[RMDB]
About this RNA: An RNA of 177 nucleotides, treated with DMS and 2A3 and read out base by base. For 2A3 the reverse transcriptase was SuperScript II with manganese. DMS (dimethyl sulfate) methylates the pairing face of unpaired adenines and cytosines. For DMS the reverse transcriptase was MarathonRT. Values cover nucleotides 27 to 126. High 2A3 reactivity points to a flexible backbone, as in loops and unpaired stretches. It was measured as part of the RMDB libraries RFM100 and RFMREP.
RNA sequence: GGGAACGACUCGAGUAGAGUCGAAAACUGCAUCUUCUUAAUCAAGGAAAUCACGGUCGCGUGUGUGCCGGAAAGAAAGUGGCCUGUGAUCUCCGGUUUCUCUUUCUCGACCGUGUUUCCUUGGUUAAGCGAUAAUAGAGUUCGCUCUAUUAUCGCUAAAAGAAACAACAACAACAAC
Reactivity to DMS in 0.01 (KOAc 150mM, MgCl2 10mM, bicine 150mM(pH8.5), 24C), signal-to-noise 3, nucleotides 027 to 126: c030u010g010c140a070u000c080u020u010c040u000u000a010a000u000c000a020a000g000g000a010a010a020u020c010a000c000g020g000u000c000g010c200g000u000g000u020g000u010g030c000c010g010g000a020a040a090g010a060a110a150g010u000g010g010c070c020u000g000u010g010a300u000c050u000c010c000g000g010u000u030u020c020u000c060u010u020u010c020u010c000g010a010c000c010g050u010g000u000u000u000c000c000u000u000g010g010u000u000a020
Reactivity to 2A3 in 0.01 (KOAc 150mM, MgCl2 10mM, bicine 150mM(pH8.5), 24C), signal-to-noise 9, nucleotides 027 to 126: c040u090g050c040a130u040c060u160u020c010u020u030a000a000u000c000a000a010g020g000a000a010a020u270c010a010c010g000g000u000c000g000c030g010u030g000u010g010u020g020c000c010g010g040a070a100a030g070a020a060a020g090u100g070g060c020c030u080g060u090g070a040u030c010u000c010c010g000g000u030u270u050c030u000c000u020u250u020c020u010c010g000a000c000c000g000u000g000u000u000u000c000c000u000u000g000g000u000u000a010